[RMDB]
Description: Chemical mapping of a 177-nucleotide RNA with DMS. The DMS profile rests on 741 reads. Source: RMDB library OK2TRN, as collected in RNAgym.
RNA sequence: GGGAACGACUCGAGUAGAGUCGAAAAACGGUAGCAGCUGCACCCACGUGACGGGCAACUAUCGCAAGGGGAAUGCCCACCUUGGUAAGCCACAGCGCGCCCUGGAGUCCAAGCACAGCAGAGUCUGGUUUGUUGCAUGGUUCGCCAUGCAACAAACAAAAGAAACAACAACAACAAC
Reactivity to DMS in 0.01 (KOAc 150mM, MgCl2 10mM, bicine 150mM(pH8.5), 24C), signal-to-noise 1, nucleotides 027 to 126: a040c130g000g000u000a060g010c040a090g030c110u010g020c080a110c010c050c070a200c220g030u000g000a140c100g030g010g000c030a090a190c080u000a040u010c080g000c040a100a050g000g010g000g000a070a050u010g010c040c020c030a050c010c010u030u010g000g010u020a070a130g000c030c050a020c110a090g000c040g020c070g010c010c050c030u000g000g000a110g000u020c070c070a050a050g010c050a070c030a080g000c020a140g000a060g000u000c020u000g010